[RMDB]
RNA sequence: GGGAACGACUCGAGUAGAGUCGAAAAUCACUUUGUUGCUCAGGCUGGUCUUGAGCUCCUGGGCUCAAGCAAUCCUCCCACCUCCGCCUCCCAAAGUGUGAGGUUCAUUUUCUGAUAUGUGGAGUCCUAAUGCGGAAUCUUUCGAGAUUCCGCAUUAAAAAGAAACAACAACAACAAC
Reactivity to 2A3 in 0.01 (KOAc 150mM, MgCl2 10mM, bicine 150mM(pH8.5), 24C), signal-to-noise 2, nucleotides 027 to 126: u030c000a030c140u070u050u190g070u140u180g010c010u000c010a010g040g000c080u070g050g020u100c040u100u240g070a010g020c000u070c040c050u150g020g000g000c000u000c010a020a030g030c020a050a090u040c000c020u010c010c000c000a030c000c030u010c000c030g030c000c020u090c040c000c030a110a280a000g040u030g070u100g010a010g000g000u110u050c010a020u030u010u060u140c060u060g130a070u010a110u290g070u050g000g030a020g030u020c020c040
Reactivity to DMS in 0.01 (KOAc 150mM, MgCl2 10mM, bicine 150mM(pH8.5), 24C), signal-to-noise 2, nucleotides 027 to 126: u020c070a130c110u020u000u010g030u000u000g010c040u020c020a010g000g000c100u050g000g000u070c000u060u010g010a040g000c030u000c010c090u000g010g020g000c000u000c040a010a040g000c090a200a110u000c040c080u000c040c020c040a080c000c000u020c030c060g040c030c020u000c030c040c030a140a120a140g000u030g010u020g070a050g000g060u000u000c090a050u010u000u010u000c090u000g000a120u030a020u000g000u000g000g010a050g000u000c030c040

Structure probing data (2A3 and DMS) for a 177-nucleotide construct. DMS adducts were read by reverse transcription with MarathonRT. The data come from the RNA Mapping Database (RMDB), library OK1LIB. For 2A3 the reverse transcriptase was SuperScript II with manganese.